[RMDB]
RNA sequence: GGGAACGACUCGAGUAGAGUCGAAAAUUGUCCAUUCUACUGUUGAUGAACACUUGGAUUAUCUCCUCUUUCAAGCAAUUAUAACUGAUGCUGCUCUGAACAUCUUACAUAGUUAUCUGGUACGCACGUACAAGUGUCUUUCCAGAGAAUACACACACCAUAUUGGGUGGUUCGCCACCCAAUAUGGAAAAGAAACAACAACAACAAC
Reactivity to DMS in 0.01 (KOAc 150mM, MgCl2 10mM, bicine 150mM(pH8.5), 24C), signal-to-noise 2, nucleotides 027 to 156: u000u000g010u000c010c030a030u000u000c050u000a140c120u000g030u000u000g000a100u010g030a040a090c040a050c090u000u000g030g000a120u000u000a110u000c050u000c070c060u000c110u000u000u010c060a010a070g020c060a100a110u000u000a110u000a080a140c120u000g000a090u000g030c000u000g020c030u000c050u010g040a050a040c030a110u000c030u000u000a070c110a070u000a100g020u000u020a060u000c020u000g030g000u000a070c300g040c030a020c040g020u000a170c230a060a140g010u000g010u000c040u000u010u000c010c010a060g000a040g000a050a090u010a090c060a140c040a070c140a120
Reactivity to 2A3 in 0.01 (KOAc 150mM, MgCl2 10mM, bicine 150mM(pH8.5), 24C), signal-to-noise 4, nucleotides 027 to 156: u110u110g030u040c020c020a050u070u030c020u090a160c060u070g060u140u070g090a140u080g070a130a000c000a010c040u030u070g030g030a040u080u130a060u130c070u020c010c040u020c090u030u160u130c070a050a050g010c030a040a050u140u140a160u120a220a100c110u060g000a060u080g020c040u000g020c010u050c060u080g060a050a010c010a050u030c050u070u060a070c030a130u150a050g060u110u070a050u010c000u000g000g000u010a000c030g020c030a010c020g040u160a100c050a220a050g000u000g040u000c040u030u100u030c000c010a020g010a010g010a040a020u140a040c060a000c010a000c000a000
The data come from the RNA Mapping Database (RMDB), library OK3TST. This 207-nucleotide RNA was probed chemically with DMS and 2A3. Values cover nucleotides 27 to 156. For 2A3 the reverse transcriptase was SuperScript II with manganese.